Conditions: 150 mM KOAc, 10 mM MgCl2 and 150 mM bicine (pH 8.5), 24 C.
This 177-nucleotide RNA was probed chemically with DMS and 2A3.
For 2A3, 3,244 sequencing reads were counted.

RNA sequence: GGGAACGACUCGAGUAGAGUCGAAAACGGUCUGGGCGUCACCAACCCUGGCUACCGCCCCGGUGACACCGCUACGGCGCUGCCCGCCGGCCUUGCCCUAGCGGCCAGCUUUAACCCGGUGCUGGCCCGGAAGUACAGCUUUCGAGCUGUACUUCCGAAAAGAAACAACAACAACAAC
Reactivity to DMS in 0.01 (KOAc 150mM, MgCl2 10mM, bicine 150mM(pH8.5), 24C), signal-to-noise 2, nucleotides 027 to 126: c130g010g000u020c010u000g030g000g000c130g030u060c050a060c010c040a160a090c060c060c060u000g010g020c050u020a100c200c050g000c020c020c080c040g030g020u000g030a100c050a120c080c020g020c050u000a070c120g030g000c030g000c160u040g000c050c000c070g040c050c070g020g010c040c040u000u010g010c010c000c030u000a040g000c090g000g000c010c010a040g000c030u000u010u040a100a150c090c000c000g020g000u000g000c000u000g000g000c000c030
Reactivity to 2A3 in 0.01 (KOAc 150mM, MgCl2 10mM, bicine 150mM(pH8.5), 24C), signal-to-noise 3, nucleotides 027 to 126: c020g000g020u040c040u100g010g010g020c000g040u080c010a020c020c020a040a080c030c000c030u050g060g000c030u080a110c010c060g050c010c010c000c020g010g010u030g010a030c030a010c050c030g020c050u090a040c080g040g020c030g010c020u040g010c010c050c000g030c030c020g020g000c010c000u030u080g000c000c000c020u020a020g020c010g030g000c000c020a000g000c010u090u110u140a110a130c020c020c000g030g000u020g000c000u000g000g000c000c030